[RMDB]
RNA sequence: GGGAACGACUCGAGUAGAGUCGAAAAAGAAUUGUACCACCACUGCGUAUCCUAAACGGGCUCUGCAGUGGUUAUUCUUGUAAAGUACUAGGAGUGAAUACUGGCCCGUAUUGCAGGCAUUAACAUUAAAAGGCAAUCCACUUCGGUGGAUUGCCAAGGACGUUUAUUAGUUCGCUAAUAAACGUCCAAAAGAAACAACAACAACAAC
Reactivity to 2A3 in 0.01 (KOAc 150mM, MgCl2 10mM, bicine 150mM(pH8.5), 24C), signal-to-noise 2, nucleotides 027 to 156: a000g070a050a020u130u130g060u090a030c000c030a000c000c000a000c000u010g000c010g050u140a090u080c010c030u100a130a220a120c130g000g000g040c080u040c070u140g020c010a000g000u000g000g000u000u000a000u000u000c020u000u050g080u150a090a110a150g010u000a060c130u180a020g100g010a040g020u130g040a060a030u050a140c030u050g050g000c010c000c000g020u020a070u020u160g020c070a030g060g000c050a030u060u130a150a000c020a040u120u140a020a080a090a020g010g020c010a000a000u000c010c000a000c030u050u060c170g030g000u010g000g000a000u000u000g000c000c000a000a000
Reactivity to DMS in 0.01 (KOAc 150mM, MgCl2 10mM, bicine 150mM(pH8.5), 24C), signal-to-noise 2, nucleotides 027 to 156: a010g040a030a030u010u000g020u000a020c090c100a180c020c000a000c010u000g010c040g060u010a060u000c040c050u000a040a090a190c120g010g020g000c050u000c120u030g000c010a010g040u020g000g000u000u000a000u000u000c010u000u000g030u000a080a130a130g010u000a050c090u000a090g010g010a090g050u010g000a080a110u000a040c000u000g020g040c030c020c000g040u000a100u020u020g000c040a050g020g020c040a060u010u000a020a050c050a090u000u010a060a040a170a160g010g000c000a010a000u000c000c000a040c010u000u000c300g090g030u000g030g010a000u000u020g020c010c010a000a040